[RMDB]
RNA sequence: GGGAACGACUCGAGUAGAGUCGAAAAUACUCAUGGGAAGUCGGCAUGACUCCCGACUAACGUGGAUGUCCGCUUUCUGGCUCCAGGCAAAGAGUGUUGGUGCGGACGUUGAUUAGCCGCGCGCCAACAUAGUCGGCAAUUUCGAUUGCCGACUAUGAAAAGAAACAACAACAACAAC
Reactivity to 2A3 in 0.01 (KOAc 150mM, MgCl2 10mM, bicine 150mM(pH8.5), 24C), signal-to-noise 4, nucleotides 027 to 126: u110a010c010u010c020a050u050g000g000g040a060a010g010u000c020g020g230c060a020u130g030a050c040u000c000c000c000g010a000c040u080a110a000c040g020u030g000g020a030u050g090u070c010c000g000c080u010u110u060c040u060g010g000c000u000c010c010a000g000g040c020a040a020a030g050a020g000u060g010u020u060g000g000u010g010c000g000g030a070c030g030u070u120g120a300u140u170a060g010c030c010g020c000g030c000g000c010c000a010a010
Reactivity to DMS in 0.01 (KOAc 150mM, MgCl2 10mM, bicine 150mM(pH8.5), 24C), signal-to-noise 8, nucleotides 027 to 126: u030a060c020u000c020a090u030g010g000g000a070a040g010u000c000g000g000c190a140u020g010a060c070u010c100c000c000g000a070c100u020a090a120c070g020u000g010g010a030u010g000u050c010c040g010c270u010u020u030c130u030g010g000c000u000c000c010a040g010g010c120a070a080a110g000a040g010u000g010u000u000g010g010u000g010c010g000g010a110c080g000u010u010g000a140u020u020a120g010c000c000g010c020g000c020g000c000c010a040a090